About this RNA:
This 177-nucleotide RNA was probed chemically with DMS and 2A3.

RNA sequence: GGGAACGACUCGAGUAGAGUCGAAAAUAGACAUAAGAAGUCGGCGCAGCUCCCGAAUCGCGGUGUGCGAUGCUACGUCGCGCGAGCGACGUAGCUGCUGCGCGGACGGCUAGCAAAAGCUAGCCAAAAUCGUAUAUGAUUUCGAUCAUAUACGAUUAAAAGAAACAACAACAACAAC
Reactivity to DMS in 0.01 (KOAc 150mM, MgCl2 10mM, bicine 150mM(pH8.5), 24C), signal-to-noise 4, nucleotides 027 to 126: u040a090g000a180c110a110u030a090a160g010a120a150g010u000c000g020g020c000g010c000a010g010c000u000c020c010c020g030a140a040u000c000g010c000g000g040u040g030u040g020c000g010a000u000g030c000u000a030c000g060u000c020g020c010g000c300g000a300g040c000g060a020c000g060u010a010g020c000u010g010c000u000g010c000g010c000g000g000a010c040g000g020c000u000a000g010c000a130a130a100a110g000c000u000a000g000c000c000a030a030
Reactivity to 2A3 in 0.01 (KOAc 150mM, MgCl2 10mM, bicine 150mM(pH8.5), 24C), signal-to-noise 8, nucleotides 027 to 126: u120a010g130a030c060a050u270a170a100g200a230a050g040u000c020g190g000c000g000c000a000g000c010u020c000c020c000g010a020a020u010c000g000c030g140g260u300g090u210g150c000g010a000u020g000c000u010a010c000g000u000c000g000c010g030c090g060a070g000c000g000a000c000g000u000a010g000c000u000g000c000u000g000c000g000c010g000g010a000c010g000g000c000u000a000g000c000a030a140a300a110g010c000u000a000g000c000c000a040a030

The 2A3 profile rests on 11,120 reads.